RNA sequence: GGGAACGACUCGAGUAGAGUCGAAAAGCGUUUAGCUUCGGCUAAACGCAAAUAAGCUGACCAGCUAUGAGGUCAUACAUGGUCAUAGCACAAAGAAAGAGAAAACACCUCUGUUCGCAGAGGUGAAGCUAGUCCAAGACUUCGGUCUUGGACUAGCAAAAGAAACAACAACAACAAC
Reactivity to 2A3 in 0.01 (KOAc 150mM, MgCl2 10mM, bicine 150mM(pH8.5), 24C), signal-to-noise 1, nucleotides 027 to 126: g000c000g000u020u000u020a000g000c030u010u050c210g040g000c010u000a000a000a000c010g000c010a020a000a000u010a010a010g120c060u000g000a000c000c000a020g000c010u000a000u010g000a020g000g000u010c070a030u170a150c130a060u200g150g000u000c000a000u010a000g000c040a010c070a030a030a030g250a060a050a000g240a000g030a010a030a070a060c000a000c010c010u040c000u020g050u040u080c220g000c060a010g010a000g040g000u000g010a010a000